[RMDB]
The record gives the reactivity of an RNA of 177 nucleotides to 2A3 and DMS. Reactivities are given for positions 27 through 126. The RNA was probed in 150 mM KOAc, 10 mM MgCl2 and 150 mM bicine (pH 8.5) at 24 C. For 2A3 the reverse transcriptase was SuperScript II with manganese. For 2A3, 7,446 sequencing reads were counted.
RNA sequence: GGGAACGACUCGAGUAGAGUCGAAAAGAAAGCGUCAUUCGACGAAAGAGAAGCUAAUGCCGCAUUAGGUUACGUGCGCAACCUAAUCAGCGCACGACAAGAAAUCUCAUUCGCAGAAAUAAGAAAACCAUUAUCGUGAGUUCGCUCACGAUAAUGGAAAAGAAACAACAACAACAAC
Reactivity to 2A3 in 0.01 (KOAc 150mM, MgCl2 10mM, bicine 150mM(pH8.5), 24C), signal-to-noise 6, nucleotides 027 to 126: g100a010a070a000g030c020g030u030c030a050u060u020c070g090a100c060g070a190a120a010g100a020g030a110a000g000c030u040a050a000u050g040c050c020g000c060a070u090u120a010g000g020u040u040a020c030g000u030g020c020g000c020a020a040c010c000u210a130a110u100c110a020g010c000g000c000a000c000g000a000c010a000a050g080a040a100a050u020c020u010c020a110u160u060c060g000c070a040g100a070a070a030u210a120a060g100a040a050a030a020
Reactivity to DMS in 0.01 (KOAc 150mM, MgCl2 10mM, bicine 150mM(pH8.5), 24C), signal-to-noise 3, nucleotides 027 to 126: g040a060a050a040g000c070g000u000c030a110u000u010c020g000a200c090g010a040a010a140g030a090g030a080a020g020c030u000a050a010u010g010c070c060g000c060a130u050u000a040g000g010u000u040a040c000g000u000g010c000g020c020a040a110c250c060u000a090a020u040c150a160g000c000g010c000a000c000g010a140c140a090a130g000a190a050a200u000c020u000c000a080u020u010c010g000c240a080g030a050a040a050u010a140a090g020a090a020a080a110